[RMDB]
RNA sequence: GGGAACGACUCGAGUAGAGUCGAAAAUACAAUAGCGUAGGGAACCAAGCUAAGAGGUUGGAAGUCCAACGGUAGAGGGCUUGGUUCGCAGCUGCUCUAGAAGAGGUCCCACUCCCUAGGCCGCAAACUUAGAUGCAAUGUUCGCAUUGCAUCUAAGAAAAGAAACAACAACAACAAC
Reactivity to DMS in 0.01 (KOAc 150mM, MgCl2 10mM, bicine 150mM(pH8.5), 24C), signal-to-noise 4, nucleotides 027 to 126: u010a120c220a090a080u020a040g010c050g010u010a120g010g000g000a010a010c010c010a020a000g010c000u020a080a110g020a140g000g010u000u010g010g020a300a140g020u000c000c000a010a010c010g000g010u010a120g000a090g000g010g010c000u000u000g010g010u000u000c010g010c020a160g000c020u000g010c060u000c020u010a010g010a110a160g010a020g000g000u000c010c010c010a210c040u000c010c040c000u000a020g000g010c050c140g000c140a040a060a090
Reactivity to 2A3 in 0.01 (KOAc 150mM, MgCl2 10mM, bicine 150mM(pH8.5), 24C), signal-to-noise 3, nucleotides 027 to 126: u160a020c070a060a120u070a150g100c040g090u100a110g070g050g000a000a000c000c000a010a010g000c010u050a080a060g070a090g220g050u020u000g030g060a270a140g140u160c010c000a010a000c000g070g050u130a090g040a090g160g060g000c000u010u010g020g000u010u000c010g000c000a010g020c010u010g020c060u040c010u080a070g000a110a010g010a030g000g020u030c000c020c000a040c020u030c000c010c000u020a010g000g000c010c000g060c040a040a050a110
Overview: The record gives the reactivity of an RNA of 177 nucleotides to DMS and 2A3. The data come from the RNA Mapping Database (RMDB), library M2PK90. Values cover nucleotides 27 to 126. In probing experiments dimethyl sulfate is read out at A N1 and C N3, which are open when not base-paired.